[RMDB]
RNA sequence: GGGAACGACUCGAGUAGAGUCGAAAAUUGCGUCAAUUACGUUAUCGAAACCGCUGCUGACCCAUAAUCCUAUCAAAAGUGAAUAAUCCUCCAUAAAUUGGCUAAUGAUAAAUUUCAAAUCAUCUUCGUUGACGUUAAAAUUUGAUGCGGCUACGGGUCCGUAGAAAUCUUUCGAGAUUUCUACGGAAAAAGAAACAACAACAACAAC
Reactivity to 2A3 in 0.01 (KOAc 150mM, MgCl2 10mM, bicine 150mM(pH8.5), 24C), signal-to-noise 2, nucleotides 027 to 156: u070u050g000c010g000u000c020a030a120u070u000a040c020g010u010u050a070u080c010g060a120a060a040c030c000g010c040u060g000c000u050g010a050c020c000c000a000u100a020a020u080c010c060u070a120u090c070a000a110a190a070g130u130g070a110a100u110a100a000u070c010c030u000c000c000a060u150a300a270a140u040u090g050g000c000u040a140a000u090g050a020u070a040a230a080u130u210u100c110a150a150a040u110c010a020u040c070u100u020c010g070u040u020g000a010c000g020u000u160a080a180a090a040u120u100u010g000a010u030g030c030g000g000c030u060a000c010g050g070g030
Reactivity to DMS in 0.01 (KOAc 150mM, MgCl2 10mM, bicine 150mM(pH8.5), 24C), signal-to-noise 1, nucleotides 027 to 156: u030u000g030c050g090u020c040a090a130u000u000a120c010g010u000u020a080u000c020g020a070a120a110c120c060g000c000u010g010c050u010g000a160c030c050c000a170u000a050a120u000c030c020u000a120u000c100a070a110a140a160g020u000g000a050a080u010a070a190u000c030c020u000c020c000a120u020a020a060a160u000u030g030g000c050u010a070a090u000g000a030u000a020a020a110u000u030u000c040a060a160a120u000c020a050u000c060u020u000c050g050u000u010g050a020c000g030u000u000a000a080a100a150u000u000u000g000a040u000g000c070g040g030c020u000a040c050g010g010g000
Annotation: Structure probing data (2A3 and DMS) for a 207-nucleotide construct. For DMS, 1,447 sequencing reads were counted. As a SHAPE reagent, 2A3 marks flexible, mostly unpaired nucleotides at the ribose 2'-OH. The data come from the RNA Mapping Database (RMDB), library OK3TST. DMS adducts were read by reverse transcription with MarathonRT.